[RMDB]
RNA sequence: GGGAACGACUCGAGUAGAGUCGAAAAAGUGAGUAUGGCGCGUUACGACGAGCCAUACUCACAACGGUUUUCCUAAAUCGUCGUGAGACGGACCUUGGAAAACCUAGUAUUUAAAUAACUAGGUCAAAUUAGCCUAGAUCCUUCGGGAUCUAGGCAACGGAUACGUAAGGUUCGCCUUACGUAUCCGAAAAGAAACAACAACAACAAC
Reactivity to 2A3 in 0.01 (KOAc 150mM, MgCl2 10mM, bicine 150mM(pH8.5), 24C), signal-to-noise 4, nucleotides 027 to 156: a000g000u000g000a000g000u010a010u000g000g000c020g010c020g050u020u040a120c300g040a000c000g040a130g040c010c000a000u000a000c000u000c000a000c000a000a000c000g010g000u010u000u000u000c000c000u000a010a010a020u090c010g010u000c020g010u070g130a130g000a040c000g000g000a000c010c000u010u010g000g000a010a010a010a000c000c000u010a020g030u020a030u030u150u130a100a180a110u150a080a040c100u050a010g000g010u010c010a010a030a150u200u200a060g000c000c000u000a000g000a000u000c000c000u010u070c170g090g000g000a000u000c000u000a000g000g000c000a000a000